[RMDB]
RNA sequence: GGGAACGACUCGAGUAGAGUCGAAAACCCCACCGCGCGCCGGACGCGUCCCUGCCCCUUGUACACACCGCCCGUCGCUCCUACCGACUGGGCGCGGCGGCGAGCGUCCCGGACCGGAAGGGCCGCGUCGACUAUCUUUAUUCGUAAAGAUAGUCGAAAAAGAAACAACAACAACAAC
Reactivity to 2A3 in 0.01 (KOAc 150mM, MgCl2 10mM, bicine 150mM(pH8.5), 24C), signal-to-noise 9, nucleotides 027 to 126: c000c000c000c010a030c010c020g030c000g010c030g030c020c010g020g010a020c000g010c010g140u030c030c010c000u030g020c000c000c000c020u070u150g110u170a050c080a010c010a030c060c030g030c020c020c000g010u020c000g010c020u070c010c010u070a120c020c060g110a070c080u200g000g000g000c010g000c000g000g000c000g000g000c020g010a020g000c010g000u030c000c030c020g010g020a040c010c010g010g020a050a030g030g000g000c020c000g030c010g050
Reactivity to DMS in 0.01 (KOAc 150mM, MgCl2 10mM, bicine 150mM(pH8.5), 24C), signal-to-noise 7, nucleotides 027 to 126: c070c000c000c100a120c090c030g010c100g010c080g010c030c020g010g000a070c050g000c030g000u010c030c050c010u010g020c010c010c080c080u020u020g020u010a090c150a100c120a120c120c010g010c030c010c000g000u000c010g000c030u000c040c040u010a130c190c050g010a050c080u030g000g010g000c050g010c040g010g000c020g000g000c110g000a120g020c020g000u000c030c020c020g010g000a090c030c030g000g010a130a070g000g000g010c020c020g000c070g020